[RMDB]
RNA sequence: GGGAACGACUCGAGUAGAGUCGAAAACCAUCCUCCAACACGCACGGACCCACCGUCAUGAUUGGGGAGAAGGGGGCGGCAAUGAUCCUGGAGGAUAGUUUGUCGUGAUAGUCGUUCGACAUUGACAAGGCUAAUACCAUUUCGAUGGUAUUAGCCUAAAAGAAACAACAACAACAAC
Reactivity to DMS in 0.01 (KOAc 150mM, MgCl2 10mM, bicine 150mM(pH8.5), 24C), signal-to-noise 3, nucleotides 027 to 126: c000c020a100u000c010c020u000c000c020a000a110c120a180c200g000c170a070c000g010g010a140c050c060c030a230c050c000g000u010c050a020u030g000a150u010u040g000g000g000g020a070g010a130a080g070g010g000g020g000c040g010g050c060a050a100u110g010a040u040c070c050u000g010g000a070g000g000a000u000a020g000u030u000u000g000u030c030g000u000g010a100u040a040g000u000c000g000u000u000c010g000a090c160a100u010u040g010a130c210a160
Reactivity to 2A3 in 0.01 (KOAc 150mM, MgCl2 10mM, bicine 150mM(pH8.5), 24C), signal-to-noise 5, nucleotides 027 to 126: c000c000a020u000c000c010u020c000c000a020a000c030a030c140g080c020a110c070g030g080a110c010c050c000a110c020c000g130u100c020a070u170g180a230u070u180g040g050g060g010a130g090a030a150g030g000g020g010g010c000g000g030c020a010a100u170g020a100u070c040c060u060g040g010a050g010g000a020u000a010g040u030u030u030g170u020c020g010u040g130a100u070a110g010u010c010g030u040u040c030g030a030c120a100u090u220g040a070c060a100
Structure probing data (DMS and 2A3) for a 177-nucleotide construct. The reactions ran in a buffer of 150 mM KOAc, 10 mM MgCl2 and 150 mM bicine (pH 8.5), at 24 C. For DMS the reverse transcriptase was MarathonRT. For DMS, 4,557 sequencing reads were counted. For 2A3 the reverse transcriptase was SuperScript II with manganese.